[RMDB]
RNA sequence: GGGAACGACUCGAGUAGAGUCGAAAAUUGUCAAAGGAACCAAAGCUUAUUCGUCUGCAUCAAUUGUUCUGCGAGGCCCCAAUGAAUACUCUUUAGAUGAAAUGGAGCGUUCAAUGCAUGAUUCUUAGACCAUUUAUUUAUUCGUAAAUAAAUGGUCAAAAGAAACAACAACAACAAC
Reactivity to DMS in 0.01 (KOAc 150mM, MgCl2 10mM, bicine 150mM(pH8.5), 24C), signal-to-noise 8, nucleotides 027 to 126: u010u010g010u000c060a050a120a140g010g010a090a090c040c070a070a100a140g010c060u000u000a090u000u000c060g020u000c020u000g010c050a050u000c080a070a110u010u000g000u000u010c040u000g010c100g010a100g010g010c040c010c030c050a050a080u010g000a040a030u000a050c040u000c020u000u000u000a080g010a150u010g010a060a070a080u010g010g000a020g010c000g020u000u000c010a050a090u010g010c120a090u010g010a110u000u000c020u000u000a300
Reactivity to 2A3 in 0.01 (KOAc 150mM, MgCl2 10mM, bicine 150mM(pH8.5), 24C), signal-to-noise 4, nucleotides 027 to 126: u080u040g050u030c020a020a070a070g040g000a040a030c030c000a090a050a000g030c030u090u090a040u140u110c040g050u020c090u040g000c020a040u020c030a080a200u050u090g010u110u050c030u060g030c010g020a030g080g000c010c010c010c010a010a040u070g020a020a010u030a040c000u040c000u040u080u090a110g030a180u160g100a070a100a040u080g010g000a010g000c010g000u020u020c020a060a030u080g020c030a060u130g050a070u120u060c010u060u090a000
Chemical mapping of a 177-nucleotide RNA with DMS and 2A3. Conditions: 150 mM KOAc, 10 mM MgCl2 and 150 mM bicine (pH 8.5), 24 C. High DMS reactivity at an A or C suggests that its Watson-Crick edge is free. For DMS, 10,743 sequencing reads were counted. Reactivities are given for positions 27 through 126. For DMS the reverse transcriptase was MarathonRT.